[RMDB]
Record summary: The record gives the reactivity of an RNA of 177 nucleotides to 2A3 and DMS.

RNA sequence: GGGAACGACUCGAGUAGAGUCGAAAAAGGGCUGGAUUCGUCCAGCCCUGCACAUUCGUACGCAACGAAGCGUACGUCAUUACGCAAAUGACGUAAUGCGUAGAACCACGGACUUCGGUCCGUGGAAAGAAACGCCCUAAUUCGUUAGGGCGUUUCUAAAAGAAACAACAACAACAAC
Reactivity to 2A3 in 0.01 (KOAc 150mM, MgCl2 10mM, bicine 150mM(pH8.5), 24C), signal-to-noise 1, nucleotides 027 to 126: a000g030g000g010c010u010g010g020a010u050u060c120g000u000c020c000a000g000c000c000c000u000g000c010a050c020a080u110u080c010g000u030a030c000g000c000a110a070c210g270a190a040g010c000g000u010a000c000g000u010c000a010u010u050a010c010g030c020a040a070a300u280g060a040c000g010u030a000a050u040g020c020g060u060a110g050a150a010c000c000a010c000g010g000a000c000u080u050c250g070g000u000c000c000g000u000g000g000a010a000
Reactivity to DMS in 0.01 (KOAc 150mM, MgCl2 10mM, bicine 150mM(pH8.5), 24C), signal-to-noise 2, nucleotides 027 to 126: a000g010g010g010c000u000g000g000a040u000u010c240g010u010c000c000a000g030c010c000c000u020g000c240a060c140a100u010u010c010g010u020a000c010g010c020a060a130c300g000a100a050g000c060g000u000a000c010g000u010c030a010u030u010a000c050g030c040a110a070a100u000g000a080c030g010u000a030a060u000g000c150g000u000a150g000a070a190c000c000a010c000g010g000a000c000u000u020c170g020g030u000c000c010g010u000g000g000a000a030
Record summary: DMS (dimethyl sulfate) methylates the pairing face of unpaired adenines and cytosines. For 2A3, 1,485 sequencing reads were counted. For 2A3 the reverse transcriptase was SuperScript II with manganese. The RNA was probed in 150 mM KOAc, 10 mM MgCl2 and 150 mM bicine (pH 8.5) at 24 C. For DMS, 1,595 sequencing reads were counted.